[RMDB]
RNA sequence: GGGAACGACUCGAGUAGAGUCGAAAAUGACUCCAGCGCUCCUAAAGCAGUGUUUGACCGAUGCACCUUCUGCGCUGUCGCUACUCAACACGCUCUUCGCUAUCGGAGACCGCUUCGAUCCGAGUGAGCUGAUGAUACUGUUCGCAGUAUCAUCAGCAAAAGAAACAACAACAACAAC
Reactivity to DMS in 0.01 (KOAc 150mM, MgCl2 10mM, bicine 150mM(pH8.5), 24C), signal-to-noise 4, nucleotides 027 to 126: u010g000a080c040u000c030c060a080g010c030g000c030u000c030c040u010a060a110a090g010c070a060g020u000g010u000u000u020g000a120c080c030g010a110u020g030c030a080c060c090u000u000c030u000g020c060g020c010u010g040u010c050g000c070u010a030c090u000c040a080a090c110a090c100g000c030u000c020u000u020c060g030c110u000a040u010c030g010g010a060g010a120c120c300g000c020u000u000c040g000a050u000c260c010g010a040g020u000g010a110